[RMDB]
RNA sequence: GGGAACGACUCGAGUAGAGUCGAAAAUUACCAUCACCUAGAACAAUGUUAACAACAGGUCAGUUGUCACCAGCUGAUUAUAAUGUUGUGACUGAUAUUAUGGUACAUACUGGUGCUGAUGUGAUGCACAUAGGAGGCUGUUCGCAGCCUCCUAUGUAAAAGAAACAACAACAACAAC
Reactivity to 2A3 in 0.01 (KOAc 150mM, MgCl2 10mM, bicine 150mM(pH8.5), 24C), signal-to-noise 3, nucleotides 027 to 126: u060u010a060c030c020a000u030c040a010c030c010u070a050g070a060a030c060a100a090u150g010u070u070a160a010c010a000a000c010a010g010g010u000c000a000g000u020u040g140u140c090a100c180c000a060g000c000u000g030a010u030u050a100u080a190a060u030g010u010u000g020u000g030a000c010u020g040a040u040a080u250u140a020u130g040g010u030a030c020a060u150a060c070u070g000g050u070g020c040u040g010a080u170g080u050g040a040u060g050c070
Reactivity to DMS in 0.01 (KOAc 150mM, MgCl2 10mM, bicine 150mM(pH8.5), 24C), signal-to-noise 4, nucleotides 027 to 126: u000u010a090c070c010a060u000c110a040c000c060u010a060g000a110a120c150a080a090u000g010u000u010a110a030c030a010a010c010a070g000g010u010c010a010g000u000u010g010u000c260a140c300c020a010g030c030u010g010a010u000u010a140u010a080a070u010g010u010u000g000u000g010a070c090u000g000a110u010a050u000u010a070u010g010g010u010a050c140a100u010a100c120u010g010g000u000g010c060u000g010a060u010g000u000g020a080u000g020c210